[RMDB]
RNA sequence: GGGAACGACUCGAGUAGAGUCGAAAAUCAUUUGUGCCAAUCAUUCUAACAAAGUAUACCUCGGUCUCAGUGAUGGCAUACUUUGCUGGAUUGAUUGGUACACAUGAAAUUGUGAUGUUAUCGGCAGAACCUUACACAAUUUCGAUUGUGUAAGGUUAAAAGAAACAACAACAACAAC
Reactivity to DMS in 0.01 (KOAc 150mM, MgCl2 10mM, bicine 150mM(pH8.5), 24C), signal-to-noise 9, nucleotides 027 to 126: u000c010a010u000u000u000g010u000g000c000c000a010a000u000c000a010u000u000c000u000a010a030c010a010a010a010g010u000a000u000a050c000c000u000c040g020g010u020c220u020c280a160g010u010g000a030u020g020g010c020a010u000a000c000u000u000u000g010c040u000g000g000a010u000u000g000a000u000u000g000g010u000a000c000a000c030a000u000g000a020a100a170u010u010g000u000g000a110u000g010u000u000a090u010c040g000g010c300a140g000
Reactivity to 2A3 in 0.01 (KOAc 150mM, MgCl2 10mM, bicine 150mM(pH8.5), 24C), signal-to-noise 7, nucleotides 027 to 126: u020c010a010u020u000u010g000u010g000c010c000a000a000u000c000a000u010u000c000u010a010a020c000a000a000a000g000u000a000u010a020c000c010u050c060g160g100u130c200u060c200a160g060u120g200a090u230g020g000c010a000u000a000c000u000u000u020g000c020u010g000g000a000u000u010g000a000u000u010g000g000u000a000c000a000c000a000u010g010a020a060a050u120u100g040u050g040a100u060g030u070u060a300u170c010g020g010c060a030g060
The record gives the reactivity of an RNA of 177 nucleotides to DMS and 2A3. Source: RMDB libraries RFM100 and RFMREP, as collected in RNAgym. Conditions: 150 mM KOAc, 10 mM MgCl2 and 150 mM bicine (pH 8.5), 24 C. For DMS the reverse transcriptase was MarathonRT.